RNA sequence: GGGAACGACUCGAGUAGAGUCGAAAAUCUAACUCAUUCGUGAGUUAGAGUGAGCGCAGCGACCAUUGGGGCGGUGGCGCGCUGUCGGUGCCGCGCGUGGCGAUAGUGCUUGCUUCGGCAAGCACAACCACAACAAGAGAUUCGUCUCUUGUUGUGGAAAAGAAACAACAACAACAAC
Reactivity to 2A3 in 0.01 (KOAc 150mM, MgCl2 10mM, bicine 150mM(pH8.5), 24C), signal-to-noise 8, nucleotides 027 to 126: u010c000u000a000a010c000u000c010a030u080u070c200g120u030g030a000g000u000u000a000g000a010g020u100g080a050g030c070g000c030a080g010c020g040a080c000c010a030u050u130g040g010g010g020c040g030g020u030g040g040c070g000c020g010c070u040g080u100c050g040g160u090g030c000c020g030c020g020c050g050u040g020g020c020g020a060u120a120g000u000g000c000u000u000g000c010u020u030c180g070g000c000a000a000g000c000a000c000a000a000
Reactivity to DMS in 0.01 (KOAc 150mM, MgCl2 10mM, bicine 150mM(pH8.5), 24C), signal-to-noise 8, nucleotides 027 to 126: u000c000u000a000a000c000u000c000a040u000u010c190g020u000g010a020g000u000u000a000g000a030g000u010g010a100g010c050g030c030a060g020c020g010a080c030c020a100u000u010g020g010g010g020c130g010g010u000g010g010c050g010c030g010c040u000g000u000c050g020g010u000g010c040c030g010c080g000c070g020u000g000g010c040g000a100u010a090g010u000g010c000u000u000g010c000u000u010c180g020g010c000a010a000g000c000a000c010a030a140

Annotation:
This 177-nucleotide RNA was probed chemically with 2A3 and DMS. The data come from the RNA Mapping Database (RMDB), library M2PK50. The RNA was probed in 150 mM KOAc, 10 mM MgCl2 and 150 mM bicine (pH 8.5) at 24 C.